[RMDB]
RNA sequence: GGGAACGACUCGAGUAGAGUCGAAAACACACUUGCCUGGCUAAACCAAACUAUAAAGUAGUUUCAAGAAGAAUGACAAAAUAUCCAGACCACAGAACAGCAUCAGAUGGUGCCAAUGUACCUAACUACAGGGAAGUUGGUAUACCACCACAAGAACUGUUACAGAGCAUUUCGAUGCUCUGUAACAAAAAGAAACAACAACAACAAC
Reactivity to 2A3 in 0.01 (KOAc 150mM, MgCl2 10mM, bicine 150mM(pH8.5), 24C), signal-to-noise 3, nucleotides 027 to 156: c070a000c000a010c030u040u080g030c000c020u010g030g070c030u100a040a050a070c050c030a060a020a030c070u050a030u060a230a150a000g080u040a010g010u050u060u090c060a060a060g020a050a000g020a060a060u110g020a040c050a020a150a010a020u100a040u040c020c010a020g040a050c020c020a010c000a030g080a140a010c010a030g060c010a000u060c020a060g040a090u020g010g000u010g000c000c000a040a000u300g020u080a040c000c000u040a090a170c040u080a100c130a000g000g010g030a040a000g000u000u000g010g000u000a000u020a010c000c010a000c000c010a030c020a050a030g080a140a020c040
Reactivity to DMS in 0.01 (KOAc 150mM, MgCl2 10mM, bicine 150mM(pH8.5), 24C), signal-to-noise 1, nucleotides 027 to 156: c080a110c040a050c050u000u010g010c010c010u000g000g000c060u000a070a030a140c040c060a090a130a140c050u010a080u000a080a070a190g010u000a050g000u010u000u000c000a080a170g030a050a110g020a090a050u010g020a300c020a010a050a040a060u000a070u000c050c050a140g000a080c000c030a100c030a070g010a080a070c030a030g000c000a220u000c050a070g010a060u000g000g030u000g110c000c000a000a050u000g000u000a300c010c000u000a050a130c110u030a170c070a190g020g000g010a090a300g030u000u020g000g030u010a060u000a140c040c000a020c020c000a000c020a160a120g000a020a230c100